[RMDB]
RNA sequence: GGGAACGACUCGAGUAGAGUCGAAAAGGAAAAUCAGCGGCACCGGGUUGUAGCCGGGAAUCACGCCGAGGUUGUACACGUAGUUGCCGUACUUGUCGCUUAUCGCGCCGAUGUUCUCGGGCUUGGCCCAAGUUUGAUUCUUCGGAAUCAAACUUGGAAAAGAAACAACAACAACAAC
Reactivity to DMS in 0.01 (KOAc 150mM, MgCl2 10mM, bicine 150mM(pH8.5), 24C), signal-to-noise 4, nucleotides 027 to 126: g000g020a120a070a090a070u000c070a070g000c040g010g020c060a110c020c030g020g010g020u020u010g020u010a150g010c040c010g010g000g010a110a040u010c150a090c190g000c000c020g000a080g010g010u010u000g020u010a050c070a050c070g000u000a050g010u000u000g010c050c060g010u000a050c060u000u000g020u000c010g010c020u000u020a070u000c070g010c130g010c030c020g010a080u000g010u010u000c030u010c020g030g010g010c070u000u000g000g010c160